RNA sequence: GGGAACGACUCGAGUAGAGUCGAAAAAUAUCUGCGGAGUUACAUUUGUUGCUAGAAUAAGCGUGAAUCAUAGUACACCGAGGGUCCACAUCUUCGUGUUGCUGUUCGCAGCAAUAUUCGGAUAACCCUUAGAUAGUUCUUUCGAGAACUAUCUAAGAAAAGAAACAACAACAACAAC
Reactivity to DMS in 0.01 (KOAc 150mM, MgCl2 10mM, bicine 150mM(pH8.5), 24C), signal-to-noise 9, nucleotides 027 to 126: a080u010a030u010c020u010g000c050g010g010a110g010u000u010a060c080a070u010u000u000g010u000u020g020c020u010a080g010a110a120u010a060a090g010c040g010u020g010a060a050u020c110a060u010a060g010u000a050c060a060c030c030g000a040g010g010g000u000c080c130a060c210a040u000c010u000u000c120g000u000g020u000u000g010c000u000g000u010u010c140g020c010a030g010c030a010a020u000a020u000u010c080g000g010a050u010a070a090c120c050
Reactivity to 2A3 in 0.01 (KOAc 150mM, MgCl2 10mM, bicine 150mM(pH8.5), 24C), signal-to-noise 9, nucleotides 027 to 126: a000u060a030u050c020u040g040c010g040g030a050g030u100u090a030c020a110u100u060u090g050u060u120g020c020u050a060g070a290a130u210a170a010g020c020g030u050g070a030a010u070c050a050u070a120g030u040a030c030a010c060c030g010a030g020g010g010u060c060c030a080c020a100u020c020u020u020c010g020u010g010u090u030g000c000u010g030u030u040c140g000c060a030g000c000a020a040u030a040u070u050c010g010g010a010u040a060a070c020c000